[RMDB]
RNA sequence: GGGAACGACUCGAGUAGAGUCGAAAACAAUGCUCGUCCUCUCCUAACAACAACAAUGGUGUGCGGAUGGUAACAACAACAAUGGAGAGGACGAGCUAACAACAACAAUCCAUCCGCACACCUAACAGGGUAAUAUGUAGUUCGCUACAUAUUACCCAAAAGAAACAACAACAACAAC
Reactivity to 2A3 in 0.01 (KOAc 150mM, MgCl2 10mM, bicine 150mM(pH8.5), 24C), signal-to-noise 4, nucleotides 027 to 126: c030a000a130u280g010c000u010c000g010u000c000c000u020c000u060c020c030u190a120a110c080a000a040c010a040a010c020a110a300u250g000g000u000g020u000g000c030g000g000a030u010g000g030u160a050a080c100a040a030c040a050a000c020a080a250u230g000g000a000g000a000g000g000a000c000g000a000g010c000u010a000a000c020a000a000c010a000a040c010a000a050u060c000c000a000u000c000c000g000c000a000c000a000c000c000u000a000a000c000a030
Reactivity to DMS in 0.01 (KOAc 150mM, MgCl2 10mM, bicine 150mM(pH8.5), 24C), signal-to-noise 1, nucleotides 027 to 126: c000a040a180u060g000c000u000c000g070u010c000c010u000c020u000c000c000u000a080a060c300a260a000c280a150a000c180a070a030u010g000g000u000g060u000g000c070g020g120a000u000g000g000u000a000a150c300a160a010c130a100a100c100a030a000u060g000g040a060g000a010g000g000a000c020g000a000g000c000u000a000a000c170a000a050c000a230a030c230a070a020u030c000c000a000u000c000c000g030c000a000c000a000c000c000u000a070a000c060a220